[RMDB]
RNA sequence: GGGAACGACUCGAGUAGAGUCGAAAAGAGAGUCCACCUGGGGCCAGGCCUCCAGAGCCAAGGCCACAGCUGGGUCUACAUGGGCAGCCAUGUCUGGGGGCAGCCAUGUCUGGGGACACCUGGGCAGGACACAGUGGUUAUUCGUAACCACUGUGUCAAAAGAAACAACAACAACAAC
Reactivity to 2A3 in 0.01 (KOAc 150mM, MgCl2 10mM, bicine 150mM(pH8.5), 24C), signal-to-noise 1, nucleotides 027 to 126: g080a000g000a010g070u000c020c000a060c000c070u000g060g000g000g000c000c010a020g080g000c000c000u070c040c090a030g040a010g040c020c040a130a100g010g040c000c000a070c020a030g110c020u120g030g000g050u050c020u050a030c000a050u080g030g000g080c100a110g140c020c000a030u040g020u040c010u060g040g010g010g000g000c010a010g020c020c000a040u070g000u000c020u040g020g010g040g000a020c020a060c030c020u000g000g000g040c000a020g000
Reactivity to DMS in 0.01 (KOAc 150mM, MgCl2 10mM, bicine 150mM(pH8.5), 24C), signal-to-noise 2, nucleotides 027 to 126: g020a140g000a090g020u010c010c010a070c210c010u000g010g020g010g030c010c060a190g010g010c010c010u000c130c150a060g000a140g010c050c060a090a070g000g010c000c000a040c060a040g020c140u010g000g010g000u010c020u000a080c040a020u010g000g000g010c220a100g030c010c000a030u000g000u000c030u020g030g000g010g000g020c040a090g000c080c030a120u010g010u000c050u010g000g000g000g000a130c280a080c000c000u000g010g010g010c050a100g010